[RMDB]
RNA sequence: GGGAACGACUCGAGUAGAGUCGAAAAUGGACGUUCGCGUCCAAAACAGGCGUACUACCAGUCGAGGAUCAACCCUGUGCCAGUUGAUCCCAAAUAGGAUCAACGGUAACACAGGUGUUGGGAGACUGGUAUCGCAUCAACGCAACUUCGGUUGCAACUACCACUGAACUUUCGAGUUCAGUGGUAGAAAAGAAACAACAACAACAAC
Reactivity to 2A3 in 0.01 (KOAc 150mM, MgCl2 10mM, bicine 150mM(pH8.5), 24C), signal-to-noise 4, nucleotides 027 to 156: u080g000g010a010c030g000u070u030c220g000c030g070u060c030c000a040a010a000a050c150a110g090g000c030g020u120a090c030u020a010c050c000a000g000u000c000g010a190g020g020a010u010c010a000a000c020c000c000u000g000u000g020c110c090a150g000u000u000g000a000u020c000c020c020a150a300a180u300a120g000g000a000u000c000a000a000c010g010g000u070a120a000c000a000c000a000g000g010u180g030u150u000g010g010g000a010g000a000c000u000g000g000u000a000u010c000g000c010a020u180c040a020a040c100g000c000a000a000c000u050u050c200g160g000u000u010g010c000a010a020
Reactivity to DMS in 0.01 (KOAc 150mM, MgCl2 10mM, bicine 150mM(pH8.5), 24C), signal-to-noise 1, nucleotides 027 to 156: u000g010g040a000c000g030u000u000c210g120c060g080u020c010c000a000a010a050a100c100a110g030g010c070g000u020a080c150u010a000c010c000a020g010u000c020g010a180g030g000a100u000c010a060a010c030c000c020u030g020u000g020c000c020a300g010u000u000g000a030u000c000c000c010a030a090a180u010a040g000g000a070u000c000a000a020c000g030g030u000a070a020c010a010c010a000g050g010u000g020u000u000g000g020g020a300g000a010c000u000g010g010u000a000u000c020g000c000a170u000c040a070a120c070g000c020a020a020c010u000u020c100g030g010u000u000g000c040a080a090